[RMDB]
RNA sequence: GGGAACGACUCGAGUAGAGUCGAAAAGAUAUGGAUCCUGGGAGUGAGCCUUUGAUCUCGGAAACGAGGGAGGCUACUCGGAUCCUAAGUCAAAAGUGCGCUAUAAGGUUCGCCUUAUAGCGCACAACUCGACAGAAAAGUUCGCUUUUCUGUCGAGAAAAGAAACAACAACAACAAC
Reactivity to DMS in 0.01 (KOAc 150mM, MgCl2 10mM, bicine 150mM(pH8.5), 24C), signal-to-noise 1, nucleotides 027 to 126: g010a050u000a300u000g000g000a010u000c000c010u020g060g010g000a030g020u010g000a010g010c000c000u000u000u010g000a070u030c000u010c050g020g000a140a120a210c000g020a030g000g000g000a000g020g000c000u000a020c010u000c010g000g010a020u000c000c030u000a000a090g000u000c030a060a060a110a090g000u000g000c020g000c000u000a000u020a000a020g000g010u000u000c230g000c020c000u020u000a000u000a020g000c000g020c000a000c030a000a030
Notes: This 177-nucleotide RNA was probed chemically with DMS. It was measured as part of the RMDB library TTRDEL. For DMS the reverse transcriptase was MarathonRT.